[RMDB]
RNA sequence: GGGAACGACUCGAGUAGAGUCGAAAAGAUAUGGAUUUCGACGAUCGUGGGACCGACGAAGUCGGAAACGACAGAGGUCGCCACGGGAGAAAUCCUAAGUCAAAAGCGUAGAGUUCGCUCUACGCAAGAGAGAACAGUGGUUCGCCACUGUUCUCUCAAAAGAAACAACAACAACAAC
Reactivity to 2A3 in 0.01 (KOAc 150mM, MgCl2 10mM, bicine 150mM(pH8.5), 24C), signal-to-noise 1, nucleotides 027 to 126: g070a020u090a070u170g020g000a030u000u030u020c210g160a300c000g000a110u030c000g000u010g000g000g020a030c050c050g060a250c070g030a300a030g000u000c000g030g020a090a080a020c010g000a000c010a020g050a040g070g080u030c140g030c050c020a010c000g000g000g000a030g000a000a010a000u000c000c000u000a070a010g070u020c020a020a000a100a030g020c000g000u010a000g010a000g010u090u080c300g040c100u000c000u000a000c000g000c000a000a010
Reactivity to DMS in 0.01 (KOAc 150mM, MgCl2 10mM, bicine 150mM(pH8.5), 24C), signal-to-noise 2, nucleotides 027 to 126: g000a030u000a300u020g010g010a000u000u000u000c000g000a140c200g000a030u010c010g000u010g000g000g010a010c120c020g010a190c230g000a110a110g000u010c000g010g000a020a050a210c010g000a050c000a060g000a180g000g010u000c000g020c000c000a000c010g010g000g040a040g000a020a000a010u000c010c000u000a000a050g000u020c020a040a070a120a110g000c010g000u000a000g010a010g010u000u010c200g020c000u010c000u000a000c020g010c000a040a000